[RMDB]
Chemical mapping of a 177-nucleotide RNA with 2A3 and DMS. For DMS, 3,960 sequencing reads were counted. Source: RMDB library TTRDEL, as collected in RNAgym. High 2A3 reactivity points to a flexible backbone, as in loops and unpaired stretches. The RNA was probed in 150 mM KOAc, 10 mM MgCl2 and 150 mM bicine (pH 8.5) at 24 C. For DMS the reverse transcriptase was MarathonRT.
RNA sequence: GGGAACGACUCGAGUAGAGUCGAAAAGAUAUGGAUAAGGGCAGCUUUUGACGUCUUCUCGGAAACGAGAGACGAUAAGCUGCCUUAUCCUAAGUCAAACGCAGCACUACUUCGGUAGUGCUGCGAAGAUUAGUAGAGCGUUCGCGCUCUACUAAUCAAAAGAAACAACAACAACAAC
Reactivity to 2A3 in 0.01 (KOAc 150mM, MgCl2 10mM, bicine 150mM(pH8.5), 24C), signal-to-noise 2, nucleotides 027 to 126: g020a000u060a020u090g010g000a010u040a020a090g150g180g090c010a020g000c040u120u140u300u300g160a080c020g020u000c070u300u050c010u040c000g000g000a050a030a020c000g010a000g010a000g010a010c020g010a000u030a020a040g000c000u000g000c000c000u000u010a000u000c000c000u000a020a000g010u010c010a010a000a130c010g000c000a000g000c000a000c000u020a000c000u060u150c300g070g000u000a000g000u000g000c000u000g000c000g000a000a020
Reactivity to DMS in 0.01 (KOAc 150mM, MgCl2 10mM, bicine 150mM(pH8.5), 24C), signal-to-noise 3, nucleotides 027 to 126: g010a020u010a300u010g000g000a010u000a010a030g020g010g000c000a010g020c010u000u000u000u010g010a170c070g010u000c000u000u020c000u000c000g000g000a080a050a150c010g010a000g000a030g000a010c000g000a060u000a000a020g020c000u000g010c000c010u000u000a000u000c000c000u010a040a110g010u000c020a100a100a260c020g000c000a000g000c000a000c000u000a000c000u000u020c240g020g010u010a000g010u000g010c000u000g000c000g010a010a030